[RMDB]
RNA sequence: GGGAACGACUCGAGUAGAGUCGAAAAAGUGUGAAGUUUGACAUCGUGAUCAAUGAUUCGAUCUGCCGUCACGUAAAAACUGUCUGGAGUAGUUUCAUUGAGAAACAGAAUGUGCAUAGUGCGUAUGAUGUCCAGGUCUAUUCGUAGACCUGGACAUAAAAGAAACAACAACAACAAC
Reactivity to DMS in 0.01 (KOAc 150mM, MgCl2 10mM, bicine 150mM(pH8.5), 24C), signal-to-noise 3, nucleotides 027 to 126: a020g030u030g010u000g000a100a110g020u000u000u020g000a120c070a040u000c000g000u000g020a200u020c010a040a000u000g010a030u000u040c030g000a150u010c000u000g000c060c100g000u020c020a010c010g000u010a020a050a100a100a120c210u000g000u000c000u080g000g000a090g000u070a240g010u000u000u010c020a050u010u000g000a010g010a120a010a070c050a130g050a080a020u010g010u000g010c040a070u020a090g000u020g000c100g020u070a060u010g000
Reactivity to 2A3 in 0.01 (KOAc 150mM, MgCl2 10mM, bicine 150mM(pH8.5), 24C), signal-to-noise 3, nucleotides 027 to 126: a000g090u090g000u040g100a070a090g030u000u080u130g050a050c020a040u020c020g010u010g000a020u000c010a010a050u030g000a040u030u010c030g110a170u020c020u100g230c000c030g000u000c000a010c020g010u010a010a020a030a000a000c020u020g020u000c170u270g000g000a000g010u040a010g000u000u020u000c030a070u060u010g030a060g000a090a090a000c010a000g070a160a070u050g000u050g060c020a010u030a180g040u090g030c030g070u130a190u190g070
Background: Chemical mapping of a 177-nucleotide RNA with DMS and 2A3. The DMS profile rests on 3,807 reads. For DMS the reverse transcriptase was MarathonRT. Values cover nucleotides 27 to 126.